An RNA of 177 nucleotides, treated with DMS and 2A3 and read out base by base. It was measured as part of the RMDB library OK1LIB. The DMS profile rests on 58,971 reads. For 2A3, 58,004 sequencing reads were counted.

[RMDB]
RNA sequence: GGGAACGACUCGAGUAGAGUCGAAAACGUCAACCCUAUUUUAUCUUGGUCAUGUGGGGUUCCGUGGGCGUUUUCCAACGCCUUGCGCGAUGGUGGGGCCCGACCCUUAGUUAUAUGAUUGGAAACCGUCUAAUGACGUGUUCGCAUGUCGUUAGACAAAAGAAACAACAACAACAAC
Reactivity to DMS in 0.01 (KOAc 150mM, MgCl2 10mM, bicine 150mM(pH8.5), 24C), signal-to-noise 9, nucleotides 027 to 126: c100g000u020c140a060a070c020c000c000u020a070u010u030u030u030a050u010c060u020u010g010g010u010c030a010u000g010u010g010g000g010g000u000u010c170c120g010u030g010g000g010c000g000u000u000u020u000c020c020a030a080c020g010c000c010u030u010g010c120g020c020g010a080u000g000g010u020g000g000g000g000c010c000c010g010a080c010c000c010u010u030a100g010u010u020a060u020a050u010g000a050u000u000g000g010a060a080a090c190c140
Reactivity to 2A3 in 0.01 (KOAc 150mM, MgCl2 10mM, bicine 150mM(pH8.5), 24C), signal-to-noise 9, nucleotides 027 to 126: c060g090u080c050a060a100c010c010c010u040a170u030u200u050u050a150u060c080u070u200g090g020u040c030a050u070g030u090g050g010g010g000u070u040c050c050g060u130g010g000g030c300g100u030u010u110u030c020c010a020a010c000g000c000c010u080u220g070c130g000c020g060a030u040g020g040u040g010g020g040g000c000c010c000g040a060c010c000c000u050u060a040g030u120u030a190u040a050u190g120a140u050u060g060g050a080a060a050c080c060